[RMDB]
RNA sequence: GGGAACGACUCGAGUAGAGUCGAAAAGGGAGAUCCGAGCAGAGGCAUAGCGAACUGCGCACGGAGAAGCCUUGAGGGAAAGCCGUAGGACCCGGGUUCGAUUCCCGGCAGCUCCACCGAAGGGCCACCGCCAUAUUAGGUUCGCCUAAUAUGGCGGAAAAGAAACAACAACAACAAC
Reactivity to DMS in 0.01 (KOAc 150mM, MgCl2 10mM, bicine 150mM(pH8.5), 24C), signal-to-noise 3, nucleotides 027 to 126: g010g030g020a070g010a210u020c010c000g000a160g000c030a050g010a140g020g050c020a140u030a160g000c060g010a070a110c000u000g000c030g000c230a210c080g000g000a060g010a090a230g010c000c000u000u000g000a300g000g000g000a140a200a050g020c000c070g000u050a250g010g010a140c150c000c000g000g010g000u020u010c250g000a200u070u040c000c000c020g000g000c080a080g000c000u000c030c080a300c050c000g000a300a060g000g000g010c000c130a050
Reactivity to 2A3 in 0.01 (KOAc 150mM, MgCl2 10mM, bicine 150mM(pH8.5), 24C), signal-to-noise 2, nucleotides 027 to 126: g060g030g020a100g010a080u000c010c000g020a000g000c010a010g060a070g130g050c110a210u170a060g080c080g120a110a050c000u020g010c030g020c030a090c050g000g020a050g030a020a000g020c000c000u000u030g010a060g020g000g000a000a080a000g060c050c040g080u160a080g040g090a080c020c000c010g000g010g000u060u030c020g010a080u020u070c000c000c000g010g000c000a030g010c020u040c050c010a020c000c000g010a010a050g000g010g000c000c000a050